[RMDB]
RNA sequence: GGGAACGACUCGAGUAGAGUCGAAAAGCAGCAUUCAGUGCUGCCCAACCCCAGGCUGGGGAGACAGGGAGCAGCACAGCGACUGUCAGCAAUAGAGUGGACCCUGGCGGCACGGUUGCCUUUAAGGCCAUAUGCUCUCCUUCGGGAGAGCAUAUGGAAAAGAAACAACAACAACAAC
Reactivity to DMS in 0.01 (KOAc 150mM, MgCl2 10mM, bicine 150mM(pH8.5), 24C), signal-to-noise 4, nucleotides 027 to 126: g000c010a040g000c010a050u000u020c190a150g020u000g010c000u000g000c010c010c050a120a140c020c010c000c040a140g010g030c110u000g010g010g010g010a100g000a060c130a090g000g000g020a140g020c020a050g010c100a060c070a060g010c070g000a130c040u000g010u010c030a110g010c080a090a090u000a100g010a130g010u000g000g000a110c050c010c030u000g000g000c020g000g010c080a030c070g010g000u010u000g000c020c010u000u010u010a100a090g010g010
Reactivity to 2A3 in 0.01 (KOAc 150mM, MgCl2 10mM, bicine 150mM(pH8.5), 24C), signal-to-noise 3, nucleotides 027 to 126: g000c010a000g010c010a030u120u210c080a090g110u010g020c010u000g020c000c010c000a050a030c000c020c000c010a040g140g130c110u080g050g030g000g030a050g050a020c030a040g050g050g110a130g000c050a020g040c040a020c040a080g030c040g060a030c000u020g010u070c030a010g000c000a090a170u100a150g120a030g100u120g000g070a080c000c010c020u040g020g000c000g020g000c040a010c090g100g010u090u080g000c020c000u050u200u120a100a070g070g000

Conditions: 150 mM KOAc, 10 mM MgCl2 and 150 mM bicine (pH 8.5), 24 C. An RNA of 177 nucleotides, treated with DMS and 2A3 and read out base by base. 2A3 adducts were read by reverse transcription with SuperScript II with manganese.